[RMDB]
RNA sequence: GGGAACGACUCGAGUAGAGUCGAAAAAUGCGGGCCGCGACAUGAGGCAUGCGAUGCCGGGGCAGGUGCUACACACCACCUACGCCGCACGAUACGCGCCGCAACGUGUGCGAUCGUCGCGCGCGGACUGAUCGGUGGACUUCGGUCCACCGAUCAGAAAAGAAACAACAACAACAAC
Reactivity to DMS in 0.01 (KOAc 150mM, MgCl2 10mM, bicine 150mM(pH8.5), 24C), signal-to-noise 1, nucleotides 027 to 126: a150u000g020c110g020g010g000c040c000g010c040g050a110c080a060u020g000a060g000g000c080a010u020g020c090g010a120u000g020c010c020g030g010g000g030c040a090g010g030u000g010c050u000a080c190a220c080a120c110c060a060c020c050u010a100c050g000c040c010g030c000a050c060g010a060u000a120c030g000c000g020c000c020g010c090a040a080c150g030u010g030u000g010c010g020a140u000c030g010u010c030g030c030g000c070g020c000g000g000a240
Reactivity to 2A3 in 0.01 (KOAc 150mM, MgCl2 10mM, bicine 150mM(pH8.5), 24C), signal-to-noise 1, nucleotides 027 to 126: a000u250g010c100g010g030g020c070c050g000c000g060a040c030a090u200g100a110g180g000c030a020u050g070c000g100a100u070g020c000c110g010g000g000g030c060a040g120g000u030g060c100u180a070c080a010c000a040c070c000a010c000c040u050a070c110g040c010c010g000c010a050c030g100a000u200a130c030g050c010g010c000c000g000c050a090a020c040g140u170g000u050g040c000g020a040u010c030g060u080c130g010c010g000c080g020c020g000g000a020